[RMDB]
RNA sequence: GGGAACGACUCGAGUAGAGUCGAAAAUUAAUCCGGCUUUAAGUUGACGAGGGCAGGGUUUAUCCAGACAUCGGCGGGUGCCCUGCGGUCUUCCUGCGACCGUUAGAGGACUGGUAAACCAAUUUAAACGGAUAACGAGAUUCGUCUCGUUAUCCGUAAAAGAAACAACAACAACAAC
Reactivity to DMS in 0.01 (KOAc 150mM, MgCl2 10mM, bicine 150mM(pH8.5), 24C), signal-to-noise 1, nucleotides 027 to 126: u000u000a070a100u000c000c030g010g030c030u000u000u000a060a100g000u000u000g010a110c100g000a130g000g000g000c020a110g010g020g030u040u010u000a030u030c000c010a090g000a150c050a110u010c060g000g010c060g000g010g010u000g000c010c030c070u020g020c020g000g000u000c020u000u010c050c030u000g020c070g000a030c050c030g090u000u000a110g030a090g000g030a130c060u000g000g030u010a020a050a070c050c010a050a110u000u000u010a100a110

This 177-nucleotide RNA was probed chemically with DMS. For DMS, 948 sequencing reads were counted. Values cover nucleotides 27 to 126. Conditions: 150 mM KOAc, 10 mM MgCl2 and 150 mM bicine (pH 8.5), 24 C. DMS adducts were read by reverse transcription with MarathonRT.